[RMDB]
Chemical mapping of a 177-nucleotide RNA with 2A3 and DMS. 2A3 adducts were read by reverse transcription with SuperScript II with manganese. Source: RMDB library M2PK50, as collected in RNAgym. The reactions ran in a buffer of 150 mM KOAc, 10 mM MgCl2 and 150 mM bicine (pH 8.5), at 24 C.
RNA sequence: GGGAACGACUCGAGUAGAGUCGAAAAACUUCCUACUUCGGUAGGAAGUAAAAGUAGAAAAGUUGGUGCUUAGACCACGCCCUCUACCGUAAUAAUUGAUAAACCCUUAGCACUUCGGUGCUAAGAAACUAAUAGACAUAUUCGUAUGUCUAUUAGUAAAAGAAACAACAACAACAAC
Reactivity to 2A3 in 0.01 (KOAc 150mM, MgCl2 10mM, bicine 150mM(pH8.5), 24C), signal-to-noise 8, nucleotides 027 to 126: a000c000u000u000c010c000u000a010c000u020u050c080g080g000u000a010g000g040a000a000g000u000a000a000a000a000g010u000a000g020a020a030a020a010g050u110u030g030g000u070g060c160u230u150a040g070a070c000c010a010c000g010c000c010c000u020c000u010a020c010c010g040u020a060a110u080a170a070u210u100g110a060u170a140a130a080c030c010c000u000u000a000g000c000a000c020u030u040c250g080g000u000g000c000u000a000a010g000a030a010
Reactivity to DMS in 0.01 (KOAc 150mM, MgCl2 10mM, bicine 150mM(pH8.5), 24C), signal-to-noise 9, nucleotides 027 to 126: a040c000u000u000c000c000u000a010c000u000u010c170g030g010u000a000g000g010a010a000g010u000a010a030a100a110g000u000a020g000a020a020a020a030g040u010u000g010g010u000g010c290u010u010a130g010a040c010c010a010c010g000c020c020c030u000c000u000a010c010c080g010u010a090a080u010a070a100u010u000g010a120u010a080a080a110c110c060c000u000u000a010g000c000a010c000u000u010c180g020g010u000g000c000u000a000a000g000a070a060